RNA sequence: GGGAACGACUCGAGUAGAGUCGAAAAGCCCACUCUGGAAGCCGAUGUCGACUUGAUGUUACAAGAGGCUGGGGCCGGCUCAGUGGAGACACCUCGUGGCUUGAUAAAGGUUACCAGCUAUGCCGGCUACUGAAUUGCUGUUCGCAGCAAUUCAGUAAAAAGAAACAACAACAACAAC
Reactivity to DMS in 0.01 (KOAc 150mM, MgCl2 10mM, bicine 150mM(pH8.5), 24C), signal-to-noise 2, nucleotides 027 to 126: g010c000c010c020a170c160u050c050u000g000g000a070a060g000c010c010g000a170u020g000u000c030g010a100c080u000u010g000a120u000g010u000u010a100c090a080a100g000a190g010g000c010u000g010g000g010g020c000c000g000g000c030u000c110a010g010u010g020g020a140g010a100c130a040c020c030u000c110g010u010g000g010c020u000u000g020a100u010a110a070a050g000g020u000u000a130c000c020a070g010c140u000a050u010g000c030c000g010g010c000
Reactivity to 2A3 in 0.01 (KOAc 150mM, MgCl2 10mM, bicine 150mM(pH8.5), 24C), signal-to-noise 1, nucleotides 027 to 126: g000c010c020c000a050c070u200c050u030g000g110a060a010g050c050c000g100a130u050g020u060c020g030a300c110u090u150g060a050u200g110u190u100a050c020a010a000g030a000g050g010c000u000g020g000g020g000c030c030g000g010c010u000c060a000g040u000g000g100a100g000a060c030a030c020c030u080c010g090u160g070g040c020u030u120g060a090u200a210a120a020g040g040u000u030a040c000c030a000g070c030u070a020u240g000c000c000g030g020c000